Structure probing data (DMS and 2A3) for a 177-nucleotide construct.
For DMS, 23,000 sequencing reads were counted.
RNA sequence: GGGAACGACUCGAGUAGAGUCGAAAAAACUACUUCUUCGGAAGUAGUUAUUGCGUGGGUCUAAUAAGCCCAAGGAGCCAGGUUCGACCCUUGCUGGGCGCAUCACCGACCGAUUCGUCGGUCGGAACCUAGAUACGAUAUUCGUAUCGUAUCUAGGAAAAGAAACAACAACAACAAC
Reactivity to DMS in 0.01 (KOAc 150mM, MgCl2 10mM, bicine 150mM(pH8.5), 24C), signal-to-noise 9, nucleotides 027 to 126: a020a010c000u000a000c000u000u000c000u000u010c180g030g010a010a010g010u000a000g000u000u000a010u000u000g020c050g020u000g000g000g010u000c020u000a100a070u010a120a200g000c000c010c010a070a080g010g010a140g010c020c040a050g000g010u000u000c080g010a110c050c010c010u000u000g020c070u000g010g000g010c030g010c090a060u010c160a180c000c010g000a010c000c000g010a030u000u010c170g020u000c000g010g010u000c000g010g000a030a030
Reactivity to 2A3 in 0.01 (KOAc 150mM, MgCl2 10mM, bicine 150mM(pH8.5), 24C), signal-to-noise 9, nucleotides 027 to 126: a000a000c000u010a000c000u000u010c000u020u050c270g070g000a010a000g000u000a000g000u000u020a140u080u090g010c020g010u070g000g010g000u010c010u010a050a040u070a220a040g000c000c010c020a010a040g120g020a010g020c020c030a010g030g030u100u150c080g070a140c010c000c010u000u050g020c030u030g010g050g020c020g000c010a040u110c050a020c020c000g000a000c010c000g000a010u030u040c210g040u000c000g040g000u000c000g000g000a000a000

Record summary:
Source: RMDB library M2PK50, as collected in RNAgym. 2A3 adducts were read by reverse transcription with SuperScript II with manganese. The reactions ran in a buffer of 150 mM KOAc, 10 mM MgCl2 and 150 mM bicine (pH 8.5), at 24 C.